This 177-nucleotide RNA was probed chemically with DMS and 2A3. For DMS the reverse transcriptase was MarathonRT. 2A3 is a SHAPE reagent: it acylates the 2'-hydroxyl of flexible nucleotides of all four kinds. The data come from the RNA Mapping Database (RMDB), library OK1LIB. 2A3 adducts were read by reverse transcription with SuperScript II with manganese. Conditions: 150 mM KOAc, 10 mM MgCl2 and 150 mM bicine (pH 8.5), 24 C. For DMS, 5,025 sequencing reads were counted.
[RMDB]
RNA sequence: GGGAACGACUCGAGUAGAGUCGAAAAGGCGGGCGAGUGGGGUGUGUGGCCGAAAGCGCCUUGUACGCGCGCCGGGUGAAUUCUUUGUGCGGGUAGGGAGAUGGCGGCCACCGUCGUAUCCCCAUAGGCGGCUUUCGUGGUUCGCCAUGGAAGCCGCAAAAGAAACAACAACAACAAC
Reactivity to DMS in 0.01 (KOAc 150mM, MgCl2 10mM, bicine 150mM(pH8.5), 24C), signal-to-noise 2, nucleotides 027 to 126: g030g030c070g000g020g000c100g000a140g040u030g000g000g000g000u000g000u050g010u020g000g020c020c000g010a060a080a100g020c050g000c020c010u010u050g020u030a080c190g030c010g000c000g000c040c050g010g000g000u020g000a080a080u030u000c040u000u010u000g010u030g020c050g000g000g000u020a050g000g000g000a090g000a050u010g000g020c010g030g000c010c000a030c020c030g000u040c140g010u000a130u010c010c000c000c050a030u010a040g030
Reactivity to 2A3 in 0.01 (KOAc 150mM, MgCl2 10mM, bicine 150mM(pH8.5), 24C), signal-to-noise 2, nucleotides 027 to 126: g000g000c010g000g040g000c020g040a080g090u050g000g020g000g010u030g010u000g000u010g020g000c000c000g060a040a000a010g030c020g000c040c000u040u070g050u070a050c010g000c010g030c010g000c040c000g000g000g000u020g030a030a050u150u010c010u000u090u090g010u050g030c010g000g030g000u070a020g050g000g030a020g010a010u060g090g000c010g000g000c000c000a070c040c010g050u000c020g030u060a190u080c020c000c000c010a040u090a100g140